RNA sequence: GGGAACGACUCGAGUAGAGUCGAAAACGCGGGGGUGAUGGGCACCGGGGCAUCGCCUUCCGCGGGACACGCUUCAACCAUGGCGUUGCCGAGCAUAUCGAUACCGGUCACGGGUACCGCGCGAGGAAUAUAGUCACACAUUCGUGUGUGACUAUAUAAAAGAAACAACAACAACAAC
Reactivity to DMS in 0.01 (KOAc 150mM, MgCl2 10mM, bicine 150mM(pH8.5), 24C), signal-to-noise 7, nucleotides 027 to 126: c020g020c020g010g000g010g000g010u000g010a020u000g010g020g020c070a100c070c030g020g000g010g020c020a010u000c010g010c000c000u000u010c020c010g010c010g010g020g010a100c130a060c070g010c030u000u000c130a090a140c120c080a090u000g000g010c020g010u000u000g040c020c010g000a140g020c100a110u000a100u010c060g000a100u000a070c040c020g000g010u010c160a070c130g010g000g000u000a050c030c030g000c100g000c030g010a120g000g010a130
Reactivity to 2A3 in 0.01 (KOAc 150mM, MgCl2 10mM, bicine 150mM(pH8.5), 24C), signal-to-noise 3, nucleotides 027 to 126: c010g000c010g010g000g000g000g030u020g010a010u020g000g060g040c090a030c050c040g010g020g030g010c000a000u000c000g000c010c000u290u200c020c000g000c000g000g000g010a010c020a000c030g030c000u110u130c060a070a060c040c020a080u130g030g010c020g030u010u060g020c010c010g010a030g040c040a050u100a040u230c050g080a030u050a130c020c000g000g040u030c030a040c090g080g000g030u030a040c000c020g020c000g000c020g040a030g000g060a050
Annotation
Source: RMDB library OK2TST, as collected in RNAgym. This 177-nucleotide RNA was probed chemically with DMS and 2A3. For 2A3 the reverse transcriptase was SuperScript II with manganese. For DMS, 11,296 sequencing reads were counted.